[RMDB]
RNA sequence: GGGAACGACUCGAGUAGAGUCGAAAACUAUCAAACCGGGUAACCCCACCUUUGGCAAGGCCUACUGUCAGAUUAAAUCUGAACUACUACAAAUGAACAGAUACUUAGUCCAGCUCGACUUCAUCUCGAUUCUGGCAGACUUCGGUCUGCCAGAAUCAAAAGAAACAACAACAACAAC
Reactivity to 2A3 in 0.01 (KOAc 150mM, MgCl2 10mM, bicine 150mM(pH8.5), 24C), signal-to-noise 1, nucleotides 027 to 126: c050u060a060u100c080a030a030a030c020c010g020g080g000u000a000a110c000c000c000c000a020c020c000u110u050u200g030g000c060a030a030g030g000c010c000u000a020c080u110g000u070c020a020g000a000u060u130a140a000a000u130c010u000g010a020a000c000u030a000c000u050a080c060a060a080a080u170g060a040a020c000a020g030a030u050a020c000u050u050a060g030u120c000c000a030g000c000u000c010g010a060c000u060u100c060a130u000c000u000c060